[RMDB]
Overview
Chemical mapping of a 207-nucleotide RNA with 2A3 and DMS. The data come from the RNA Mapping Database (RMDB), library OK3TST. For DMS the reverse transcriptase was MarathonRT. The RNA was probed in 150 mM KOAc, 10 mM MgCl2 and 150 mM bicine (pH 8.5) at 24 C. 2A3 adducts were read by reverse transcription with SuperScript II with manganese.
RNA sequence: GGGAACGACUCGAGUAGAGUCGAAAAACUAGGAGAAAAACUAGUAGGAUUAGUGUCCUGCUGGUGUCCCGGAAGCAUCUCAGUAGCUCUACACACUCCGCCAUUCAAGCUUUCUCAGCUUCCCCUCACUCUUUAGAACCUGGCUGAUGCUGAGUGAUCUGAAUUCCCAAUUCGUUGGGAAUUCAGAAAAAGAAACAACAACAACAAC
Reactivity to 2A3 in 0.01 (KOAc 150mM, MgCl2 10mM, bicine 150mM(pH8.5), 24C), signal-to-noise 2, nucleotides 027 to 156: a020c080u100a060g050g030a090g060a100a120a020a020a000c030u010a000g010u010a020g030g020a020u110u080a140g120u240g010u200c020c000u020g000c010u010g030g000u010g010u030c020c010c000g010g030a090a010g040c040a070u060c010u000c050a050g020u080a050g020c020u000c090u160a030c070a000c010a010c080u030c020c010g000c010c010a040u080u070c080a080a010g030c030u130u200u050c030u070c050a010g020c010u040u050c040c010c000c000u060c000a010c020u060c010u040u070u040a070g010a100a070c030c000u010g050g010c030u050g030a020u060g000c010u000g010a010g020u000g010a010
Reactivity to DMS in 0.01 (KOAc 150mM, MgCl2 10mM, bicine 150mM(pH8.5), 24C), signal-to-noise 1, nucleotides 027 to 156: a140c020u010a080g000g000a080g000a080a070a120a190a030c020u010a000g000u000a030g010g000a030u000u000a140g030u000g000u000c030c000u040g010c000u000g020g000u000g000u000c010c010c010g000g030a120a130g010c040a050u000c000u000c040a010g050u000a130g000c080u000c030u020a100c100a150c050a090c030u040c050c020g040c010c020a150u000u000c030a090a130g000c050u000u010u000c030u000c030a170g020c030u000u000c000c000c000c030u000c030a090c070u010c040u000u000u000a120g020a060a080c010c010u000g020g030c030u000g010a100u010g020c010u010g000a120g010u010g030a100